[RMDB]
RNA sequence: GGGAACGACUCGAGUAGAGUCGAAAAGAUAUGGAACACUAGGCUUUUGACGAAGGGUAUUCGGAAACGAAUACUCUUCGAUAAGCCUAUUGUUCCUAAGUCAAACGCAAGAGUUCGCUCUUGCGAACAUUAAAUACUCCUUCGGGAGUAUUUAAUGAAAAGAAACAACAACAACAAC
Reactivity to DMS in 0.01 (KOAc 150mM, MgCl2 10mM, bicine 150mM(pH8.5), 24C), signal-to-noise 5, nucleotides 027 to 126: g000a020u000a210u010g000g000a010a000c000a010c120u000a000g010g010c000u000u000u000u000g020a240c170g010a010a010g010g000g010u000a010u000u000c000g020g000a040a040a100c010g010a020a010u000a000c000u000c000u000u000c000g000a050u000a010a020g010c000c000u000a000u000u000g000u000u000c000c000u000a010a060g000u000c020a110a150a300c030g010c010a020a010g010a030g020u000u010c300g010c000u000c000u000u000g010c000g010a060a120
Reactivity to 2A3 in 0.01 (KOAc 150mM, MgCl2 10mM, bicine 150mM(pH8.5), 24C), signal-to-noise 4, nucleotides 027 to 126: g000a000u040a010u090g010g000a020a010c000a000c000u010a010g000g040c040u080u180u300u300g300a260c070g000a010a000g000g020g000u010a000u000u000c000g000g000a020a030a010c020g000a000a000u000a000c000u000c000u000u000c000g000a000u010a020a000g010c000c000u000a000u000u000g000u000u000c000c000u000a000a000g000u010c010a100a040a100c040g000c000a000a010g020a010g040u110u210c300g080c130u000c000u010u010g000c000g010a020a000
This 177-nucleotide RNA was probed chemically with DMS and 2A3. For DMS the reverse transcriptase was MarathonRT. Source: RMDB library TTRDES, as collected in RNAgym. The 2A3 profile rests on 8,836 reads.